[RMDB]
RNA sequence: GGGAACGACUCGAGUAGAGUCGAAAACUUGAGAGCAGCAACCUGCAUUGCAGCGGCGUGAGCGGCAGCCUGAGCUGCAUCGCCUUCACCGGUGUAGGCAACCAAAACGCCCACUGCUGGAGGCAGGGAUUAUGCGUCCGUUCGCGGACGCAUAAUCAAAAGAAACAACAACAACAAC
Reactivity to DMS in 0.01 (KOAc 150mM, MgCl2 10mM, bicine 150mM(pH8.5), 24C), signal-to-noise 2, nucleotides 027 to 126: c080u010u010g020a090g010a170g010c010a050g000c150a080a120c090c030u000g020c050a180u000u000g010c040a020g000c260g000g000c060g030u070g010a120g010c090g010g000c070a040g010c040c110u000g020a140g000c010u000g020c060a030u000c130g000c060c020u000u000c120a020c170c020g010g010u000g010u020a040g010g030c020a160a150c070c140a040a010a100a120c160g000c000c020c020a030c000u000g010c140u000g000g000a030g000g000c030a110g000g000
Reactivity to 2A3 in 0.01 (KOAc 150mM, MgCl2 10mM, bicine 150mM(pH8.5), 24C), signal-to-noise 2, nucleotides 027 to 126: c030u090u140g070a080g000a010g080c000a010g000c010a040a130c010c030u040g000c040a140u000u230g010c020a030g010c050g070g010c040g040u070g050a070g030c070g040g000c050a010g020c010c020u080g030a030g050c030u030g040c040a030u090c040g000c010c000u000u000c000a060c020c040g000g030u020g050u130a150g020g040c020a050a100c060c090a080a020a080a050c120g000c000c010c000a030c010u020g000c020u020g000g040a010g020g000c020a030g090g060